[RMDB]
RNA sequence: GGGAACGACUCGAGUAGAGUCGAAAAUACCAAUGGUUCGCCAUUGGUACUUGUAUUGACGAAUACUACCGUAGAAGUAUUCAGGUCUCAUAACUACGGUUAUACACUAGAGUUUCGACUCUAGUAAGCAAACAGUAGGUUUCGACCUACUGUUUGCAAAAGAAACAACAACAACAAC
Reactivity to DMS in 0.01 (KOAc 150mM, MgCl2 10mM, bicine 150mM(pH8.5), 24C), signal-to-noise 2, nucleotides 027 to 126: u010a020c000c000a000a000u000g000g030u000u020c240g040c020c010a010u000u010g000g000u000a000c040u000u000g010u000a170u000u020g020a180c140g000a000a000u000a020c000u010a140c000c000g000u000a010g030a250a030g010u000a010u000u000c010a060g020g010u000c010u000c030a030u000a090a160c010u000a020c020g010g000u040u000a090u000a070c180a060c010u000a000g010a010g010u000u010u020c180g030a050c000u000c000u000a000g000u010a040a060
Reactivity to 2A3 in 0.01 (KOAc 150mM, MgCl2 10mM, bicine 150mM(pH8.5), 24C), signal-to-noise 2, nucleotides 027 to 126: u030a000c020c000a010a000u020g010g020u040u050c230g040c060c000a020u010u020g010g000u000a010c020u040u120g130u120a170u120u190g120a050c060g030a010a000u000a030c010u060a220c000c000g020u000a010g010a190a000g000u030a010u010u030c010a040g000g160u000c030u000c030a110u100a170a090c000u010a000c010g000g050u070u140a150u040a040c080a000c040u010a000g010a010g000u000u080u090c170g040a010c010u000c020u000a000g000u000a020a010